[RMDB]
The record gives the reactivity of an RNA of 207 nucleotides to DMS and 2A3. The 2A3 profile rests on 1,604 reads. High 2A3 reactivity points to a flexible backbone, as in loops and unpaired stretches.
RNA sequence: GGGAACGACUCGAGUAGAGUCGAAAAUUUGGAUUCUGAAAACUAACUGGCAUCAACACUGGGUGUAGAAACAUGCUUGCCUUAUGUAUCAGAGGACAUGCUCAGCAGAUCCAAGAGAUAUAUUUGGCAACUUUUUCUAGAAAAGGCACAUUGGGUACGUAGUCAAAAUCUUCGGAUUUUGACUACGAAAAGAAACAACAACAACAAC
Reactivity to DMS in 0.01 (KOAc 150mM, MgCl2 10mM, bicine 150mM(pH8.5), 24C), signal-to-noise 1, nucleotides 027 to 156: u000u000u000g030g010a160u010u000c040u000g010a040a070a130a110c050u000a020a050c000u000g000g020c030a150u000c030a160a100c070a040c060u030g000g020g050u000g000u030a020g010a090a060a100c090a070u020g000c050u000u000g010c000c010u020u000a000u000g020u000a010u000c040a060g000a300g000g010a070c050a160u000g010c050u010c040a130g000c120a050g010a000u000c020c010a040a210g000a260g010a080u070a020u000a020u000u010u000g000g000c010a010a050c020u000u000u000u000u030c010u000a110g030a080a030a040a100g000g020c000a000c020a030u020u040g020g010g020u010a100
Reactivity to 2A3 in 0.01 (KOAc 150mM, MgCl2 10mM, bicine 150mM(pH8.5), 24C), signal-to-noise 2, nucleotides 027 to 156: u100u030u030g050g030a020u080u020c020u070g050a060a050a050a060c030u060a050a070c050u020g040g020c030a040u040c020a070a090c030a030c090u040g040g020g000u070g020u060a010g000a010a050a010c120a040u040g040c070u010u010g010c000c000u000u010a000u010g010u000a010u010c010a000g040a070g110g010a000c060a100u030g000c040u110c290a110g000c000a020g060a070u000c000c020a050a010g100a010g010a120u030a000u000a010u030u030u030g000g020c000a000a000c000u030u000u010u020u030c020u010a020g050a030a080a010a020g030g000c030a020c000a100u070u080g080g000g000u050a030

2A3 adducts were read by reverse transcription with SuperScript II with manganese.
Values cover nucleotides 27 to 156.
It was measured as part of the RMDB library OK3TST.